RNA sequence: GGGAACGACUCGAGUAGAGUCGAAAAGGGGUCAAGGUGUUCAUCGGAACUACCACAAUGACGUACUGAAGCCUCCACGGUAUAAGACAGUGGCCGAUGGUAGCCUUGACGGAGGCACCCAAAGAUCCCAUAAACUCUUCGGAGUUUAUGGGAUCAAGUCUAUUAUGAGGUUCGCCUCAUAAUAGACAAAAGAAACAACAACAACAAC
Reactivity to 2A3 in 0.01 (KOAc 150mM, MgCl2 10mM, bicine 150mM(pH8.5), 24C), signal-to-noise 7, nucleotides 027 to 156: g060g020g050g010u020c020a010a000g050g000u080g110u300u300c010a010u000c000g000g030a070a060c090u220a100c220c010a010c020a070a220u210g050a020c070g010u010a010c010u030g050a170a030g010c000c000u000c020c010a010c010g000g000u010a020u010a080a100g110a070c130a150g010u010g000g010c000c000g000a000u010g010g210u190a010g010c000c000u000u000g000a000c010g000g000a000g000g010c010a040c010c000c010a070a100a010g010a000u000c010c000c000a000u000a000a000a000c000u010c000u060u080c290g120g000a000g000u000u000u000a000u000g000g000g000a000u000c000a000a000
Reactivity to DMS in 0.01 (KOAc 150mM, MgCl2 10mM, bicine 150mM(pH8.5), 24C), signal-to-noise 2, nucleotides 027 to 156: g000g020g000g040u000c030a010a050g010g020u000g000u010u000c020a050u000c000g000g000a150a070c040u000a300c030c010a030c030a120a160u010g040a040c050g000u000a030c000u010g000a100a100g020c010c000u000c040c030a300c070g020g020u000a040u000a050a200g000a220c050a050g010u000g000g020c030c010g000a080u020g010g020u000a130g000c010c000u000u000g020a030c030g020g040a060g040g050c000a130c020c010c000a090a090a240g000a020u000c000c000c000a020u000a020a010a030c010u000c010u000u000c300g080g010a050g010u000u000u000a000u000g010g010g000a010u000c000a000a100